[RMDB]
RNA sequence: GGGAACGACUCGAGUAGAGUCGAAAAAUCUACGACACAGGUACUGUGACACCUUGCGCGUACGCGAAAAGGGAACCCGACCCUCCCCUGCAACGCUCCACUUACGGACAGCCGGCGAUGCGCACUGUAUAUUAUGCUCAUUCGUGAGCAUAAUAUAAAAAGAAACAACAACAACAAC
Reactivity to 2A3 in 0.01 (KOAc 150mM, MgCl2 10mM, bicine 150mM(pH8.5), 24C), signal-to-noise 5, nucleotides 027 to 126: a000u060c030u060a040c050g100a030c020a000c020a070g160g080u190a130c060u080g040u070g110a030c010a040c060c010u040u080g010c020g000c020g080u140a120c130g000c010g050a090a090a040a070g030g000g030a030a060c000c020c030g040a090c030c010c010u030c020c000c000c000u000g010c020a070a040c030g020c020u000c010c020a080c030u120u150a020c040g020g020a030c010a020g040c020c000g050g000c010g030a040u040g020c010g020c030a040c030u010g030
Reactivity to DMS in 0.01 (KOAc 150mM, MgCl2 10mM, bicine 150mM(pH8.5), 24C), signal-to-noise 9, nucleotides 027 to 126: a090u000c050u000a050c080g020a140c060a060c110a040g010g010u010a050c060u010g020u000g010a140c120a110c030c020u000u000g020c050g010c010g010u010a060c170g020c040g010a020a040a060a040g010g010g010a090a090c030c010c020g010a260c020c010c000u000c010c000c000c010u000g010c040a070a070c080g010c050u000c030c040a070c110u000u010a110c140g010g000a090c090a090g010c060c060g000g010c030g010a050u000g010c040g010c060a060c130u010g010